[RMDB]
RNA sequence: GGGAACGACUCGAGUAGAGUCGAAAACUAGAUUCCGAUAGAGAAUCGAGAGAAAACUGGCUCUCCCUUAGCCAUCCGAGGUGGACGUCUGUCCUCCUUCGGAUGCCCAGGUCGGACCGCGAGGAGGCCUAAAUCAAAAGUUCGCUUUUGAUUUAGGAAAAGAAACAACAACAACAAC
Reactivity to DMS in 0.01 (KOAc 150mM, MgCl2 10mM, bicine 150mM(pH8.5), 24C), signal-to-noise 6, nucleotides 027 to 126: c040u000a080g010a030u000u000c000c010g000a210u000a110g010a130g010a030a010u000c010g010a110g010a100g000a070a040a090a090c150u000g000g000c030u000c030u000c040c020c040u000u000a090g000c150c010a020u000c000c000g010a030g010g010u000g000g010a010c000g020u010c260u020g010u000c010c000u000c030c000u000u010c010g010g000a010u000g010c090c050c060a070g010g010u000c050g000g000a170c030c030g000c080g000a070g010g000a080g010g010
Reactivity to 2A3 in 0.01 (KOAc 150mM, MgCl2 10mM, bicine 150mM(pH8.5), 24C), signal-to-noise 5, nucleotides 027 to 126: c010u020a050g000a020u010u000c020c030g170a270u190a190g270a030g010a080a020u020c030g010a010g000a010g010a090a150a030a070c060u070g030g000c000u000c010u000c010c010c010u030u090a020g030c040c010a010u000c000c000g000a010g000g000u010g010g000a010c020g130u180c300u300g020u000c010c010u020c020c000u090u100c000g000g010a000u000g010c000c010c000a020g000g050u030c020g040g040a060c010c010g040c040g060a070g040g050a020g020g080